[RMDB]
RNA sequence: GGGAACGACUCGAGUAGAGUCGAAAAGAUAUGGACCUUCUACGUGUGGCUUGGACCAUUGUGAAUCACUAGAUCGGAAACGAUCUAGUGAUUCACAAUGCUAGCCACAGUAGAGAGGUCCUAAGUCCAAGACUGUCUAGUUCGCUAGACAGUCUUGAAAAGAAACAACAACAACAAC
Reactivity to DMS in 0.01 (KOAc 150mM, MgCl2 10mM, bicine 150mM(pH8.5), 24C), signal-to-noise 3, nucleotides 027 to 126: g000a130u000a300u010g010g010a020c000c010u010u000c000u000a000c010g020u010g050u000g000g000c010u000u010g030g010a120c300c010a020u000u000g010u000g000a010a010u000c000a000c000u000a000g000a000u000c000g000g000a140a100a180c000g010a010u000c000u000a000g010u000g000a000u000u000c000a000c000a000a000u000g000c030u000a020g000c010c000a000c000a030g000u000a010g010a040g010a030g030g010u000c000c010u000a010a090g010u010c060